[RMDB]
RNA sequence: GGGAACGACUCGAGUAGAGUCGAAAAUAUGUAUGUAUGUAUGUUUCCAUUUAAGUAUGUGUGAAUAUACGUAUAAGUGUAGCAAAGGAAUACAUUUCAACGAAUAUUUGUGCAGAUGAUUGAUGUUACCUAAUCAUGACUUCGGUCAUGAUUAGGUAAAAGAAACAACAACAACAAC
Reactivity to 2A3 in 0.01 (KOAc 150mM, MgCl2 10mM, bicine 150mM(pH8.5), 24C), signal-to-noise 1, nucleotides 027 to 126: u260a090u160g050u030a090u150g060u040a060u130g010u030a120u050g070u000u010u020c040c000a000u000u150u080a130a040g040u030a070u100g030u010g010u010g020a010a010u010a000u000a020c000g020u010a030u010a110a050g000u040g000u000a020g000c100a130a030a300g170g060a090a080u010a000c000a030u020u060u010c010a030a020c010g000a020a010u070a040u030u040u060g020u000g030c000a010g000a110u070g030a040u050u150g020a020u130g140u100u050
Reactivity to DMS in 0.01 (KOAc 150mM, MgCl2 10mM, bicine 150mM(pH8.5), 24C), signal-to-noise 1, nucleotides 027 to 126: u000a040u000g010u000a100u010g010u000a030u000g020u010a040u000g010u000u000u010c030c040a090u010u010u000a090a180g010u000a080u010g000u000g020u000g000a010a030u000a010u000a070c000g030u000a080u000a020a080g020u000g080u000a000g020c190a110a150a260g020g010a080a110u000a000c010a020u000u000u000c230a070a030c010g010a170a020u000a010u000u000u000g010u000g000c020a000g000a100u010g010a100u000u000g000a050u030g000u000u000

This 177-nucleotide RNA was probed chemically with 2A3 and DMS. It was measured as part of the RMDB library OK2TST. High 2A3 reactivity points to a flexible backbone, as in loops and unpaired stretches. For 2A3, 885 sequencing reads were counted. The DMS profile rests on 1,180 reads.